[RMDB]
RNA sequence: GGGAACGACUCGAGUAGAGUCGAAAAUAGAAGAGGAGUCUCCUGGACGCUUCCGCCCGCUCGGGAUGGGCCUCAGUGCCGACGAGGAGUCCGCAGGUGGGAGGAUCAGCCACCGGAGAGGGACGCGUAAGUUUCGACUUCGGUCGAAACAAAAGAAACAACAACAACAAC
Reactivity to DMS in 0.01 (KOAc 150mM, MgCl2 10mM, bicine 150mM(pH8.5), 24C), signal-to-noise 5, nucleotides 027 to 129: u000a030g000a050a060g010a040g000g000a080g010u020c000u020c030c040u060g000g000a040c010g020c000u000u000c080c050g020c040c000c030g030c010u030c050g040g020g030a090u040g010g020g000c040c030u010c100a000g030u050g000c000c070g000a070c060g010a050g010g000a100g000u000c040c050g060c100a100g030g020u000g010g010g040a020g030g000a060u030c060a130g040c050c050a040c020c030g010g020a070g010a020g000g000g000a040c140g000c060g030u000a080a120
Reactivity to 2A3 in 0.01 (KOAc 150mM, MgCl2 10mM, bicine 150mM(pH8.5), 24C), signal-to-noise 6, nucleotides 027 to 129: u160a000g050a070a010g020a020g060g010a030g040u020c020u030c020c030u020g010g010a040c050g020c050u090u020c000c010g020c020c010c010g060c040u060c060g070g000g010a080u060g050g040g030c010c000u070c050a080g040u100g140c020c010g040a080c020g000a030g000g000a010g010u030c020c030g050c050a030g030g020u050g030g000g030a030g000g000a030u050c040a020g050c030c010a040c000c020g010g010a020g000a000g000g010g000a000c030g020c010g060u060a110a070
Notes: An RNA of 170 nucleotides, treated with DMS and 2A3 and read out base by base. DMS adducts were read by reverse transcription with MarathonRT. The reactions ran in a buffer of 150 mM KOAc, 10 mM MgCl2 and 150 mM bicine (pH 8.5), at 24 C. Reactivities are given for positions 27 through 129. The DMS profile rests on 25,463 reads.